[RMDB]
RNA sequence: GGGAACGACUCGAGUAGAGUCGAAAAACGCUGGGAGUUCCGAGAACAGUGGAUUCUUUUGACGGCUCGCUGAAGCGCGCACGGCGAGCCGAUAAGAAUCCCUGUUCGUUUGACGAACUCCUGUGCUGAAGCGCGCACGGCAACCGAAAGGUGCGAAGAAGACCAAUAUCUUCGGAUAUUGGUCUUCAAAAGAAACAACAACAACAAC
Reactivity to 2A3 in 0.01 (KOAc 150mM, MgCl2 10mM, bicine 150mM(pH8.5), 24C), signal-to-noise 1, nucleotides 027 to 156: a000c040g000c000u000g000g050g000a030g000u000u000c000c000g010a040g000a040a000c000a000g050u200g240g000a010u000u010c060u030u140u160u280g160a090c000g010g010c000u000c000g010c000u020g020a150a030g000c000g000c000g000c030a030c000g000g000c010g000a000g000c000c000g000a040u010a000a020g000a020a000u030c000c030c000u000g000u000u000c000g020u020u120u060g010a020c020g000a000a000c010u000c000c000u010g020u030g000c030u090g030a070a010g020c000g010c020g000c030a010c000g060g030c020a070a180c010c010g000a070a040a070g000g040u050g010c020g010a110a100
Structure probing data (2A3) for a 207-nucleotide construct. The reactions ran in a buffer of 150 mM KOAc, 10 mM MgCl2 and 150 mM bicine (pH 8.5), at 24 C. 2A3 adducts were read by reverse transcription with SuperScript II with manganese.